[RMDB]
RNA sequence: GGGAACGACUCGAGUAGAGUCGAAAACAGGAAUUACUGGACUUUCAGAAGCAGGGCUCAGGGCUCGACUGGCCCUGGUCAUGGAAGUGCAGGUACCUGAAUGUAGCUGCUGCCCAUAUCUGAGCCCCUGCCUCCAUUACUUCGGUAAUGGAGGCAGAAAAGAAACAACAACAACAAC
Reactivity to DMS in 0.01 (KOAc 150mM, MgCl2 10mM, bicine 150mM(pH8.5), 24C), signal-to-noise 2, nucleotides 027 to 126: c030a040g000g020a110a110u020u000a110c000u000g010g000a020c000u000u000u010c010a010g010a200a150g010c010a020g010g010g010c000u020c020a030g000g020g010c110u000c150g000a070c020u000g000g010c010c000c000u010g010g000u000c070a150u000g000g000a000a010g000u000g000c010a010g000g000u000a100c010c020u010g000a140a070u000g020u010a050g060c030u010g010c030u000g020c080c010c020a030u000a040u000c010u010g000a110g020c020c020c020
Reactivity to 2A3 in 0.01 (KOAc 150mM, MgCl2 10mM, bicine 150mM(pH8.5), 24C), signal-to-noise 1, nucleotides 027 to 126: c020a010g060g050a080a090u110u060a300c020u040g000g070a000c000u040u040u050c020a000g020a140a040g200c000a010g040g010g000c090u270c260a010g000g100g000c090u150c210g110a060c040u070g000g000c000c000c000u000g010g040u020c010a020u000g000g020a040a020g030u030g150c000a010g000g050u020a070c000c000u000g050a060a050u130g000u040a020g000c010u080g020c020u050g000c010c010c000a020u040a070u030c020u010g050a020g010c000c000c000